[RMDB]
RNA sequence: GGGAACGACUCGAGUAGAGUCGAAAACCGGCUCGGUUAGAGCAAAAACACAAACGCUAACAAAAUCGUUAGUUUCUCCCGUCAAACAGCACUAGUUGCCGCUUGAUCCUUAAGGAGAUGGGGUGAUUCGGUUACCCUCUUUCGAGAGGGUAACCGAAAAAGAAACAACAACAACAAC
Reactivity to 2A3 in 0.01 (KOAc 150mM, MgCl2 10mM, bicine 150mM(pH8.5), 24C), signal-to-noise 1, nucleotides 027 to 126: c010c000g000g000c000u000c000g130g000u130u260a120g000a010g020c030a000a000a000a120a000c210a030c030a080a080a000c060g000c020u040a080a000c030a000a060a010a300u170c050g030u000u000a090g020u010u050u000c020u000c000c000c000g000u000c000a000a020a020c000a060g070c030a000c020u080a080g010u200u080g060c010c020g090c080u000u040g030a020u030c000c030u070u260a120a090g030g000a080g000a000u010g070g060g030g000u090g030a030u000

About this RNA:
An RNA of 177 nucleotides, treated with 2A3 and read out base by base. The RNA was probed in 150 mM KOAc, 10 mM MgCl2 and 150 mM bicine (pH 8.5) at 24 C.